RNA sequence: GGGAACGACUCGAGUAGAGUCGAAAAGAUAUGGAUUACGAAUGGCUUUUGACGCAGGGGCGUCGGAAACGACGCCGACUGCGAUAAGCCACGUAAUCCUAAGUCAAAAGUGACGUUCGCGUCACAAUCAGAAAAGAAUGUUCGCAUUCUUUUCUGAAAAAGAAACAACAACAACAAC
Reactivity to DMS in 0.01 (KOAc 150mM, MgCl2 10mM, bicine 150mM(pH8.5), 24C), signal-to-noise 5, nucleotides 027 to 126: g010a050u000a300u020g000g000a020u000u000a000c000g010a150a180u010g020g000c000u000u000u000u000g030a240c110g010c000a010g010g000g000g000c000g010u000c000g020g000a070a060a180c010g020a010c000g010c000c000g010a060c000u000g010c000g010a050u000a020a010g000c000c010a030c000g000u000a010a000u000c000c000u000a010a080g000u000c020a080a100a130a150g010u000g010a020c000g030u000u020c300g030c030g000u000c000a010c010a110a150
Reactivity to 2A3 in 0.01 (KOAc 150mM, MgCl2 10mM, bicine 150mM(pH8.5), 24C), signal-to-noise 4, nucleotides 027 to 126: g020a000u050a020u130g000g000a000u020u020a010c050g110a300a300u110g000g020c040u080u150u190u300g300a160c070g000c000a000g020g030g000g000c010g000u000c020g020g000a050a060a020c000g020a000c010g000c020c000g000a010c010u000g000c000g010a000u020a010a000g000c000c000a000c010g000u010a000a000u000c000c000u000a030a020g020u010c050a060a020a070a140g010u010g000a010c020g030u070u120c300g060c020g170u010c000a000c010a000a080